[RMDB]
RNA sequence: GGGAACGACUCGAGUAGAGUCGAAAAAAGUCCAUAUGCCCACCUUCGCUGGACCGGGUGGAUGCUUAUACAUGCUAUGGAUGCCUACAUUUGAAAUAAUGUAGAUGCCUAAUACUCUCUCUCAGGGAGAGAGUUUAGAUGCCUCCAAAGGUUAUGCUAUGCUUUUAUCGUUCGCGAUAAAAGCAUAAAAAGAAACAACAACAACAAC
Reactivity to 2A3 in 0.01 (KOAc 150mM, MgCl2 10mM, bicine 150mM(pH8.5), 24C), signal-to-noise 3, nucleotides 027 to 156: a000a010g080u010c010c000a000u040a040u110g030c020c000c010a010c020c000u020u060c080g010c030u070g080g030a040c010c010g020g000g010u010g010g000a030u210g010c030u160u110a090u060a150c090a050u210g050c020u070a050u070g000g000a010u030g010c000c000u020a000c000a010u030u050u080g160a140a100a050u160a020a010u080g000u000a020g000a060u110g030c000c000u030a080a050u160a100c000u000c000u000c000u000c010u030c160a120g010g300g010a000g000a000g000a000g010u000u000u010a010g000a010u050g030c010c050u070c030c060a120a120a040g040g000u020u030a030u140g020c010
Reactivity to DMS in 0.01 (KOAc 150mM, MgCl2 10mM, bicine 150mM(pH8.5), 24C), signal-to-noise 2, nucleotides 027 to 156: a020a120g030u010c000c010a110u000a080u000g010c060c000c010a000c050c040u000u020c110g040c060u000g000g000a200c070c060g030g020g010u010g010g010a090u000g010c040u000u000a120u000a050c070a080u000g040c030u010a250u000g020g020a030u000g020c070c000u000a010c000a010u000u000u000g000a150a090a160u000a020a000u010g020u000a040g020a110u010g050c050c000u000a060a040u000a030c010u010c010u000c000u000c000u000c120a280g040g050g010a000g010a010g000a010g000u000u000u010a030g000a140u010g000c040c050u000c020c050a040a080a100g010g010u000u000a060u000g000c120